[RMDB]
RNA sequence: GGGAACGACUCGAGUAGAGUCGAAAAGGAGCUCGGCAAGCUCUUAAUCGUAGGUAGAGCUUGCGUUCGCUCUACCUUACCACCGGAGCGAACUGUAGGGUCGGUGGUAUCGUGACUCUACAGUAAGGGCACGAUACGAUAUUGCUCUUACCGAGCAAAUAUGCACCAGUUUCGACUGGUGCAUAUUAAAAGAAACAACAACAACAAC
Reactivity to 2A3 in 0.01 (KOAc 150mM, MgCl2 10mM, bicine 150mM(pH8.5), 24C), signal-to-noise 3, nucleotides 027 to 156: g120g010a060g020c000u010c010g000g000c010a000a030g000c000u000c010u010u020a060a050u040c020g000u030a010g000g000u000a000g020a000g000c020u090u150g080c110g100u110u050c020g010c000u000c000u000a000c000c000u020u050a020c010c010a000c010c000g000g000a000g010c020g050a090a070c070u160g040u160a070g000g020g000u010c020g000g000u020g030g010u010a020u030c020g020u000g100a220c010u010c010u010a030c040a070g040u150a060a040g000g000g000c010a000c010g020a010u020a030c010g010a010u030a090u060u050g010c000u000c000u010u010a010c000c000g000a000g000c000a000
Reactivity to DMS in 0.01 (KOAc 150mM, MgCl2 10mM, bicine 150mM(pH8.5), 24C), signal-to-noise 2, nucleotides 027 to 156: g020g020a050g010c010u000c000g010g030c030a080a170g000c010u000c000u000u000a030a100u000c090g030u000a020g010g030u010a030g000a030g020c060u000u000g020c190g050u000u010c150g000c010u000c000u000a020c010c010u000u010a030c030c020a050c040c040g040g010a030g000c020g000a060a080c020u000g020u000a130g020g000g030u000c020g070g030u000g010g030u000a010u000c010g020u000g000a100c000u000c000u000a160c000a240g010u010a080a070g000g000g000c010a030c030g010a050u010a030c050g020a120u000a220u000u000g000c010u000c000u010u010a090c010c020g020a070g020c010a080